[RMDB]
RNA sequence: GGGAACGACUCGAGUAGAGUCGAAAAGUCUAGAUCGGCGAGCGUGGCGAUCAGGUCGGCGGGAUCGACGUUGGACACGAAGCGCGCGGAAAUGCCCGCGUCGGCAUAGUGGCGCAACGCUUGGUACUCAUUACUCAGUCUUCGGACUGAGUAAUGAAAAAGAAACAACAACAACAAC
Reactivity to DMS in 0.01 (KOAc 150mM, MgCl2 10mM, bicine 150mM(pH8.5), 24C), signal-to-noise 5, nucleotides 027 to 126: g010u000c030u000a120g010a080u010c040g010g010c040g000a070g020c060g040u010g010g020c020g000a070u000c060a090g010g010u000c050g010g020c060g010g020g010a100u000c030g000a050c020g000u000u000g020g010a080c020a030c030g010a140a190g000c030g000c030g000c010g000g000a070a110a120u010g010c180c010c020g000c020g010u000c080g010g000c020a040u010a250g010u000g000g000c030g000c000a010a030c020g000c050u000u000g010g020u010a090c130
Reactivity to 2A3 in 0.01 (KOAc 150mM, MgCl2 10mM, bicine 150mM(pH8.5), 24C), signal-to-noise 4, nucleotides 027 to 126: g020u000c020u040a060g000a170u050c050g040g020c010g040a010g010c060g030u090g060g000c030g010a060u070c040a020g050g040u040c020g040g070c020g090g040g040a110u060c030g030a030c010g020u050u060g050g030a020c010a000c090g040a030a010g010c000g000c010g000c030g040g010a050a240a120u240g030c010c010c010g030c020g020u100c090g030g000c010a050u050a060g040u060g060g000c050g020c030a020a010c020g020c040u020u050g040g030u050a070c010
Chemical mapping of a 177-nucleotide RNA with DMS and 2A3. Conditions: 150 mM KOAc, 10 mM MgCl2 and 150 mM bicine (pH 8.5), 24 C. For 2A3 the reverse transcriptase was SuperScript II with manganese.